RNA sequence: GGGAACGACUCGAGUAGAGUCGAAAAUGGAGGUCUGACGUCCCGUUCUGGGAGGGGAGGAUGGAAGCCUAGCUUGGUCACUACCAGUGUGCACAUGUGUGUAGACUAGUCAAGCAUCGUUGAUACAUAUCAACCUGUCUUUCGAGACAGGUUGAUAAAAAGAAACAACAACAACAAC
Reactivity to DMS in 0.01 (KOAc 150mM, MgCl2 10mM, bicine 150mM(pH8.5), 24C), signal-to-noise 3, nucleotides 027 to 126: u000g000g000a040g000g030u010c090u020g000a200c120g020u000c010c000c010g030u010u000c200u060g000g030g000a070g000g000g000g010a060g030g010a080u030g000g010a040a100g000c060c050u000a070g000c030u000u010g020g000u020c080a090c170u010a070c050c070a060g010u000g030u000g010c030a030c020a180u090g030u020g000u000g000u000a010g010a030c040u010a100g000u000c030a040a030g020c060a110u030c120g020u000u000g000a080u040a080c180a160
Reactivity to 2A3 in 0.01 (KOAc 150mM, MgCl2 10mM, bicine 150mM(pH8.5), 24C), signal-to-noise 2, nucleotides 027 to 126: u130g000g050a030g010g090u100c060u070g070a070c080g050u000c060c030c000g030u120u170c040u090g000g000g060a140g000g030g000g020a010g000g010a020u000g030g020a040a040g100c010c040u030a020g020c020u000u010g040g000u040c070a050c130u040a080c030c070a010g000u100g020u000g200c000a000c000a140u240g230u090g020u040g020u150a000g020a040c000u050a010g020u060c000a060a020g030c010a000u130c090g030u010u040g030a030u070a190c080a000
Source information
Structure probing data (DMS and 2A3) for a 177-nucleotide construct. Conditions: 150 mM KOAc, 10 mM MgCl2 and 150 mM bicine (pH 8.5), 24 C. For DMS the reverse transcriptase was MarathonRT. For 2A3, 908 sequencing reads were counted.